[RMDB]
RNA sequence: GGGAACGACUCGAGUAGAGUCGAAAAACGGUGCGGAAGUUCGCGCUUCCGUGAAACGCGAAAAUCGGACGGUGGCUGCAAGUCGCAUCGCAAAACCGCGGCAAGUGGAGUGAGCGAGAGGAGGCUGAAACCAUCCAACACUUCGGUGUUGGAUGAAUGUUCACACUUUGUUCGCAAAGUGUGAACAAAAAGAAACAACAACAACAAC
Reactivity to 2A3 in 0.01 (KOAc 150mM, MgCl2 10mM, bicine 150mM(pH8.5), 24C), signal-to-noise 3, nucleotides 027 to 156: a000c020g000g000u040g030c000g020g030a030a030g040u100u140c060g030c000g000c040u060u020c020c000g000u000g020a090a080a000c090g020c020g080a060a020a010a060u110c020g030g030a010c030g020g010u020g040g010c040u070g000c060a080a010g000u010c010g010c020a000u030c010g000c020a070a080a000a020c040c050g010c010g010g040c070a070a040g020u050g050g030a040g010u040g020a060g000c040g000a010g010a020g040g000a010g000g040c030u070g030a060a010a000c030c000a000u000c000c000a000a000c020a000c010u030u120c240g090g000u020g010u000u000g000g000a000u000g000a000a020
Reactivity to DMS in 0.01 (KOAc 150mM, MgCl2 10mM, bicine 150mM(pH8.5), 24C), signal-to-noise 2, nucleotides 027 to 156: a050c000g040g040u000g000c000g000g000a040a100g020u000u000c170g010c230g010c000u000u000c010c030g020u000g040a050a050a040c040g000c000g010a030a080a080a150u010c070g020g030a070c030g010g040u010g050g020c010u040g000c030a050a100g000u000c010g030c020a090u030c070g020c040a030a120a100a130c030c050g030c070g030g000c070a060a070g030u000g000g020a220g000u000g010a130g020c000g010a130g030a110g000g020a110g000g010c030u010g020a060a060a180c120c000a030u000c000c000a000a000c000a000c010u000u000c300g070g030u000g030u010u000g000g000a000u000g000a000a040